[RMDB]
RNA sequence: GGGAACGACUCGAGUAGAGUCGAAAAGAUAUGGAGGUUGCUGGAGAGCGAGGAUCUCGGAAACGAGGGAGCUCCAGUGCCUCCUAAGUCAAAGCCAGAUUGCGAACUUCGGUUCGCAAUCUGGCAACCAUUAAUGUUAGUUCGCUAACAUUAAUGGAAAAGAAACAACAACAACAAC
Reactivity to 2A3 in 0.01 (KOAc 150mM, MgCl2 10mM, bicine 150mM(pH8.5), 24C), signal-to-noise 4, nucleotides 027 to 126: g030a030u080a060u180g010g010a030g060g030u300u300g080c000u010g040g050a240g010a030g210c030g080a210g060g030a030u020c000u000c000g000g010a090a070a020c020g000a000g000g010g010a010g000c000u000c010c000a010g000u010g000c000c000u000c000c000u000a050a010g010u000c040a060a030a020g020c010c020a000g000a010u020u010g010c030g000a010a010c010u070u190c300g100g000u000u010c000g000c000a000a000u000c000u020g010g000c000a000a000
Reactivity to DMS in 0.01 (KOAc 150mM, MgCl2 10mM, bicine 150mM(pH8.5), 24C), signal-to-noise 3, nucleotides 027 to 126: g000a060u010a300u010g000g020a010g010g020u000u000g080c010u000g000g010a070g010a060g000c060g010a110g020g010a120u010c010u000c000g010g000a130a110a180c000g010a010g000g000g000a110g020c000u000c000c010a010g020u000g000c010c000u000c000c000u000a000a050g010u010c020a100a110a140g020c010c000a000g000a030u000u000g000c000g000a040a010c000u000u020c190g030g000u000u000c000g010c020a000a000u000c000u000g010g010c000a000a020